[RMDB]
RNA sequence: GGGAACGACUCGAGUAGAGUCGAAAACUGGCAGCAUCAGUACCAGGUUGGAGUGGGCGCUGGACACCACCAAUGCUGGGGAGUGGACGCUGGCUGGAGCCCCACCCAGGGCUGCACAUUGCUCAGCAAUUCCACGAAUGUUCGCAUUCGUGGAAUUAAAAGAAACAACAACAACAAC
Reactivity to DMS in 0.01 (KOAc 150mM, MgCl2 10mM, bicine 150mM(pH8.5), 24C), signal-to-noise 2, nucleotides 027 to 126: c030u010g000g010c010a040g020c040a060u000c030a090g010u010a130c020c010a050g000g020u000u000g010g020a190g010u010g010g000g000c110g020c050u000g000g020a060c030a090c010c010a070c010c020a030a030u000g010c020u000g010g020g000g010a080g020u000g000g000a060c130g000c000u010g010g010c040u010g000g010a060g020c000c010c010c020a080c040c010c020a200g000g000g020c020u000g020c130a060c170a080u010u010g020c020u000c020a040g000c040
Reactivity to 2A3 in 0.01 (KOAc 150mM, MgCl2 10mM, bicine 150mM(pH8.5), 24C), signal-to-noise 2, nucleotides 027 to 126: c040u000g080g020c000a010g000c010a010u040c030a040g010u120a110c010c010a020g040g080u030u010g070g050a220g020u090g020g000g020c050g020c110u090g070g020a040c040a020c030c000a040c000c010a010a020u200g210c000u020g010g000g020g070a110g060u140g020g010a020c040g000c010u030g130g000c030u020g040g110a020g000c030c010c020c000a030c000c020c010a030g010g040g000c010u050g010c020a030c000a090u080u160g020c000u020c050a030g000c040
Chemical mapping of a 177-nucleotide RNA with DMS and 2A3.
For 2A3, 1,856 sequencing reads were counted.
Source: RMDB library OK2TRN, as collected in RNAgym.
Conditions: 150 mM KOAc, 10 mM MgCl2 and 150 mM bicine (pH 8.5), 24 C.
For 2A3 the reverse transcriptase was SuperScript II with manganese.